[RMDB]
RNA sequence: GGGAACGACUCGAGUAGAGUCGAAAAUUGAUAAUUUGUUGUGUAACUUCAUUUAAAUGAAUUGAAACAAAUUUAAUACAAGUGGAUGUAGGAUAACGGUCCGUCCUUUACAUUGGUAUAAAAGUGAACGACACAGACCUCUUCGGAGGUCUGUGAACGUUAGAUAAGUGUUCGCACUUAUCUAACGAAAAGAAACAACAACAACAAC
Reactivity to 2A3 in 0.01 (KOAc 150mM, MgCl2 10mM, bicine 150mM(pH8.5), 24C), signal-to-noise 5, nucleotides 027 to 156: u080u070g030a020u040a210a030u040u010u030g020u010u010g050u020g060u080a060a080c050u030u020c010a060u020u140u250a160a220a070u040g010a020a020u090u060g040a100a020a010c020a020a070a020u060u140u120a100a050u140a080c030a080a020g070u060g080g090a070u130g090u230a030g000g010a020u030a110a050c020g010g010u000c020c030g000u010c000c010u020u010u010a030c030a130u080u220g090g020u050a040u020a060a020a020a010g120u140g090a030a010c030g060a000c000a000c000a000g000a000c000c000u010c000u040u050c110g110g000a000g000g000u000c000u000g000u000g000a000a000
Reactivity to DMS in 0.01 (KOAc 150mM, MgCl2 10mM, bicine 150mM(pH8.5), 24C), signal-to-noise 3, nucleotides 027 to 156: u000u020g030a140u000a050a070u010u000u000g020u000u000g010u010g000u000a110a100c090u020u000c010a040u000u020u000a080a120a120u010g010a030a060u010u010g010a210a070a130c050a030a090a030u000u010u000a060a120u000a100c040a020a060g000u000g020g010a110u010g020u000a010g010g000a040u000a040a140c030g000g000u000c040c020g000u000c000c010u000u000u000a040c010a170u000u020g040g020u000a060u000a040a060a070a100g020u000g000a020a030c020g040a300c020a000c000a010g010a040c000c000u010c010u000u000c300g030g020a010g030g000u000c000u000g010u000g010a000a050
An RNA of 207 nucleotides, treated with 2A3 and DMS and read out base by base. For 2A3, 3,827 sequencing reads were counted. For DMS, 6,133 sequencing reads were counted. Conditions: 150 mM KOAc, 10 mM MgCl2 and 150 mM bicine (pH 8.5), 24 C. Reactivities are given for positions 27 through 156. The data come from the RNA Mapping Database (RMDB), library M2RFPK.